RNA sequence: GGGAACGACUCGAGUAGAGUCGAAAAGAUAUGGAUUGAUCCUACAGGGUCAAUGAUGGCGAUCGGAAACGAUCGCUUGAGACUAGUAGGAGUCAAUCCUAAGUCAAAAGGACAGUUCGCUGUCCAACAUAAAAUCAUCCUUCGGGAUGAUUUUAUGAAAAGAAACAACAACAACAAC
Reactivity to 2A3 in 0.01 (KOAc 150mM, MgCl2 10mM, bicine 150mM(pH8.5), 24C), signal-to-noise 3, nucleotides 027 to 126: g000a020u080a040u160g000g000a000u000u020g000a010u030c000c010u020a000c040a120g300g070g000u030c060a130a300u100g000a020u040g020g000c010g020a000u000c000g010g000a050a050a060c010g010a000u000c000g000c030u000u010g000a010g000a010c030u070a090g000u000a000g030g030a010g020u000c000a000a000u000c010c000u000a070a010g000u030c030a050a000a060a170g000g000a010c010a000g020u090u170c300g070c170u000g000u000c000c000a010a000
Reactivity to DMS in 0.01 (KOAc 150mM, MgCl2 10mM, bicine 150mM(pH8.5), 24C), signal-to-noise 4, nucleotides 027 to 126: g010a050u000a300u000g010g000a010u000u000g000a100u000c000c000u000a010c020a280g030g000g010u010c000a250a200u020g010a120u000g000g000c000g000a000u000c000g000g000a100a120a160c000g000a010u000c000g010c000u000u000g000a060g010a020c010u010a170g020u000a010g000g000a050g020u000c010a010a010u000c010c000u000a010a090g000u000c020a070a050a170a160g000g010a010c010a010g020u010u010c260g030c010u010g010u010c000c000a120a160